Chemical mapping of a 207-nucleotide RNA with 2A3 and DMS. It was measured as part of the RMDB library M2RFPK. Conditions: 150 mM KOAc, 10 mM MgCl2 and 150 mM bicine (pH 8.5), 24 C. For DMS the reverse transcriptase was MarathonRT.

RNA sequence: GGGAACGACUCGAGUAGAGUCGAAAACCCAGUUCCGGGGCCGUUCACUGGAUCCGAAGCCUCUAGAAGGAUAAUAUAGGCUCUCCAUACCCUACUCCGACUCAAUACGUCCCCGUCGUACAGAAUGCAAGGGCAUCCCUGUUCGCAGGGAUGCCAACAAGUACUUACAGUUCGCUGUAAGUACUUGAAAAGAAACAACAACAACAAC
Reactivity to 2A3 in 0.01 (KOAc 150mM, MgCl2 10mM, bicine 150mM(pH8.5), 24C), signal-to-noise 3, nucleotides 027 to 156: c010c000c000a010g040u090u050c060c010g000g020g020g030c010c000g000u080u110c070a050c100u050g050g060a090u150c020c030g040a050a020g060c030c020u090c050u110a170g080a230a060g160g040a060u080a300a040u180a070u040a120g010g020c010u020c000u010c030c020a070u100a260c010c000c040u020a060c030u060c060c040g100a070c020u030c120a050a100u080a150c010g000u010c000c000c010c030g040u030c010g020u040a070c030a070g070a140a120u180g090c070a050a060g030g000g010c000a000u030c000c010c000u020g000u020u060c210g010c060a000g000g000g000a000u000g000c000c000a000a000
Reactivity to DMS in 0.01 (KOAc 150mM, MgCl2 10mM, bicine 150mM(pH8.5), 24C), signal-to-noise 1, nucleotides 027 to 156: c020c000c000a140g000u000u000c020c020g010g020g030g020c040c020g000u000u000c060a100c100u010g010g020a050u000c030c060g040a120a110g020c030c020u000c030u000a100g000a130a100g000g010a160u000a110a140u000a160u000a080g000g030c030u000c030u010c030c040a130u000a060c050c030c040u010a080c040u010c040c020g010a080c000u000c020a080a070u000a080c000g020u000c010c010c030c030g000u000c080g020u000a240c060a120g000a090a150u000g010c010a050a150g000g010g040c020a000u000c010c010c020u000g020u000u000c220g030c000a050g040g000g000a000u000g000c000c000a000a010